Conditions: 150 mM KOAc, 10 mM MgCl2 and 150 mM bicine (pH 8.5), 24 C. Structure probing data (DMS and 2A3) for a 177-nucleotide construct. For DMS the reverse transcriptase was MarathonRT. 2A3 adducts were read by reverse transcription with SuperScript II with manganese. Source: RMDB library TTRDES, as collected in RNAgym. For DMS, 1,808 sequencing reads were counted. DMS (dimethyl sulfate) methylates the pairing face of unpaired adenines and cytosines.

RNA sequence: GGGAACGACUCGAGUAGAGUCGAAAAGAUAUGGACGAAGGUCAAUCGCAACAGCUAGCAUCGGAAACGAUGCUAGACAUGCGAAUUGACUUCGUCCUAAGUCAAAAGACACGGUUCGCCGUGUCAACAGGUUGUUAGGGUUCGCCCUAACAACCUGAAAAGAAACAACAACAACAAC
Reactivity to DMS in 0.01 (KOAc 150mM, MgCl2 10mM, bicine 150mM(pH8.5), 24C), signal-to-noise 2, nucleotides 027 to 126: g010a060u000a300u020g000g020a010c010g010a020a000g050g020u010c000a000a010u000c010g000c000a050a120c300a170g000c000u000a000g000c000a010u000c000g020g000a130a100a270c000g020a030u000g000c000u000a000g010a040c080a140u000g000c000g020a120a030u000u000g000a070c000u000u010c000g000u000c000c030u010a000a090g030u000c040a110a100a170a080g010a010c000a000c020g000g020u000u000c300g030c000c000g040u010g010u020c000a020a160
Reactivity to 2A3 in 0.01 (KOAc 150mM, MgCl2 10mM, bicine 150mM(pH8.5), 24C), signal-to-noise 2, nucleotides 027 to 126: g030a030u110a060u170g000g000a010c020g010a080a010g300g210u040c010a010a010u030c000g000c010a000a190c040a290g040c000u010a000g000c010a020u000c000g010g020a050a000a070c010g000a010u010g000c000u000a010g000a020c000a000u080g000c030g100a160a140u010u000g010a010c000u000u000c000g010u000c000c000u000a000a000g050u000c030a030a000a070a110g010a000c010a000c050g000g070u060u110c300g060c100c010g000u020g000u000c000a000a010